[RMDB]
RNA sequence: GGGAACGACUCGAGUAGAGUCGAAAAGGGGUCCGAGAUGAGAAGGCCAGAGCUUUUGACGUCCUGAAGCCUCCACGGGACGAUAAGCUCUGGAACUACCUUCUCGCUCGGACGGAGGCACCCAAAACUGGAGUAUAUGUUCGCAUAUACUCCAGAAUCUCCGAUAGGAGUUCGCUCCUAUCGGAGAAAAAGAAACAACAACAACAAC
Reactivity to 2A3 in 0.01 (KOAc 150mM, MgCl2 10mM, bicine 150mM(pH8.5), 24C), signal-to-noise 1, nucleotides 027 to 156: g010g020g000g020u000c000c000g000a000g030a250u130g000a000g010a000a000g010g000c000c010a030g000a000g000c040u220u270u250u170g180a070c060g000u020c000c000u020g010a080a000g010c010c010u000c030c010a000c010g020g000g000a000c000g000a030u040a220a010g000c000u040c000u000g010g010a000a000c000u140a050c010c000u000u000c000u020c000g000c000u010c010g010g010a000c000g010g000a000g000g010c040a010c000c000c010a080a070a030a060c000u000g000g000a000g000u000a000u000a000u030g030u020u130c220g030c120a000u000a000u000a010c000u000c000c000a000g000a030a020
Source: RMDB library RNAMAK, as collected in RNAgym. This 207-nucleotide RNA was probed chemically with 2A3. The RNA was probed in 150 mM KOAc, 10 mM MgCl2 and 150 mM bicine (pH 8.5) at 24 C.